Source: RMDB library OK1LIB, as collected in RNAgym. The record gives the reactivity of an RNA of 177 nucleotides to 2A3 and DMS. The DMS profile rests on 14,078 reads. DMS adducts were read by reverse transcription with MarathonRT.

RNA sequence: GGGAACGACUCGAGUAGAGUCGAAAACAGCCACAAUAGGUAAGGCGAAUGGAGUUUGUAGUGCAGAAGGCGCAGAAUAACUUUACUUAAUUUCAGGGGAAAUUAAACGCCUUUCGCCGCGACUUCAUAAUCCCUAGGGAUUCGUCCCUAGGGAUUAAAAAGAAACAACAACAACAAC
Reactivity to 2A3 in 0.01 (KOAc 150mM, MgCl2 10mM, bicine 150mM(pH8.5), 24C), signal-to-noise 8, nucleotides 027 to 126: c030a010g020c010c010a120c090a120a260u240a210g120g070u180a210a050g020g000c030g020a020a030u020g010g020a020g040u040u130u180g110u250a300g020u110g140c060a040g030a040a000g020g000c010g000c060a020g150a120a090u140a120a030c030u060u130u220a040c030u090u080a060a090u140u080u020c070a060g000g040g090g160a010a030a020u040u050a040a090a010c000g010c000c010u010u050u040c030g000c000c000g000c000g000a000c000u000u020c000a010
Reactivity to DMS in 0.01 (KOAc 150mM, MgCl2 10mM, bicine 150mM(pH8.5), 24C), signal-to-noise 7, nucleotides 027 to 126: c100a110g010c010c000a100c150a130a170u060a120g010g020u010a080a110g010g010c030g010a140a060u020g000g000a010g010u000u010u040g040u020a050g030u040g030c020a060g010a010a010g000g010c000g000c300a160g010a100a070u020a060a180c160u030u020u020a110c140u020u020a030a030u010u020u010c070a160g030g000g000g000a020a040a010u000u000a000a060a300c000g000c000c000u000u010u010c060g020c000c010g000c010g000a010c010u000u000c000a060